[RMDB]
RNA sequence: GGGAACGACUCGAGUAGAGUCGAAAACAUUUAAAGGAAUGUGACCUGAUAUCACCCAAUAUUAGGUAACUGCAAAAGGGUGUGGCUCAGAAAAUGCACAUAACCGCAUGUAGAAAGCAAUGAGGGACUGGGGAAAACCCUUUCGUUGCGGUAAAAAGCUAAAUACUGGGUUCGCCCAGUAUUUAGCAAAAGAAACAACAACAACAAC
Reactivity to 2A3 in 0.01 (KOAc 150mM, MgCl2 10mM, bicine 150mM(pH8.5), 24C), signal-to-noise 2, nucleotides 027 to 156: c010a060u150u270u300a160a100a020g100g010a120a050u090g010u010g090a020c000c000u000g010a000u000a000u020c080a130c000c000c050a010a010u020a010u010u010a000g030g000u020a000a180c080u080g000c030a030a060a060a000g020g030g020u020g010u020g080g000c000u000c040a000g070a110a180a040a040u120g040c010a050c010a060u080a100a070c000c040g020c000a030u060g020u050a050g090a110a080a000g010c030a040a030u090g010a020g010g020g010a010c080u140g030g000g000g030a060a000a000a030c000c000c000u000u040u050c080g010u020u020g010c020g000g020u110a130a080a000a030a010